Chemical mapping of a 207-nucleotide RNA with 2A3.
RNA sequence: GGGAACGACUCGAGUAGAGUCGAAAAGAAAGAAAGAAAGAAAUCUGACAGAAUGACGAAUUCGAUCGUUGUGGUCGGCGGGCCACCACGUCAUUCCUUCGCACUGUCUCCGGGCAGACCGCCAUAAAAAAGCGGAUCUACUUCGGUAGAUCCGCAACCUAUGGUUGACGUUCGCGUCAACCAUAGGAAAAGAAACAACAACAACAAC
Reactivity to 2A3 in 0.01 (KOAc 150mM, MgCl2 10mM, bicine 150mM(pH8.5), 24C), signal-to-noise 3, nucleotides 027 to 156: g040a010a040a000g050a040a060a010g090a070a150a010g090a030a140a060u080c080u110g030a050c080a080g080a110a110u060g050a090c050g050a030a060u140u100c110g020a060u160c080g030u060u020g010u000g010g010u020c060g000g020c020g010g000g020c020c010a010c000c040a000c020g050u040c030a020u060u040c030c010u080u120c030g030c000a010c030u010g000u000c020u010c040c080g010g010g020c040a030g020a060c000c000g000c010c010a040u260a010a060a000a030a030a000g000c000g000g000a010u000c000u010a010c010u020u040c160g050g000u000a000g010a000u000c010c000g000c000a000a000

The reactions ran in a buffer of 150 mM KOAc, 10 mM MgCl2 and 150 mM bicine (pH 8.5), at 24 C. 2A3 adducts were read by reverse transcription with SuperScript II with manganese.